[RMDB]
RNA sequence: GGGAACGACUCGAGUAGAGUCGAAAACGGUCGACGAUGAGCGCGCCGAACGCCGCGACGACGAAGAACGUCAGGAAGCCGUCCAGCAGCGCGGUCCGCGCGGUGACGAAGCUGACCCCGUCGCAGACAAUCGAGGCUUGUUCGCAAGCCUCGAUUGAAAAGAAACAACAACAACAAC
Reactivity to DMS in 0.01 (KOAc 150mM, MgCl2 10mM, bicine 150mM(pH8.5), 24C), signal-to-noise 2, nucleotides 027 to 126: c060g010g000u010c010g020a070c040g010a130u010g010a140g000c080g040c130g000c070c030g010a080a080c060g020c060c040g000c000g010a150c050g010a080c000g000a080a110g010a150a160c080g010u000c040a080g000g010a220a140g000c080c000g000u000c040c060a110g000c170a090g000c040g010c040g020g020u010c130c080g010c020g030c020g010g000u010g000a020c060g000a110a080g010c010u010g000a150c020c080c030c050g000u010c040g000c080a100g020a220
Reactivity to 2A3 in 0.01 (KOAc 150mM, MgCl2 10mM, bicine 150mM(pH8.5), 24C), signal-to-noise 2, nucleotides 027 to 126: c030g020g100u120c040g020a110c030g120a180u210g090a040g090c050g000c000g040c080c020g000a090a040c060g020c030c000g010c000g060a100c040g010a020c040g040a100a060g070a210a050c020g030u030c000a020g120g000a040a040g030c000c000g050u040c030c010a050g100c010a060g000c090g000c040g000g070u110c100c060g000c020g000c000g030g030u090g010a090c040g000a020a010g060c030u030g060a050c010c000c010c000g050u040c010g000c030a020g040a130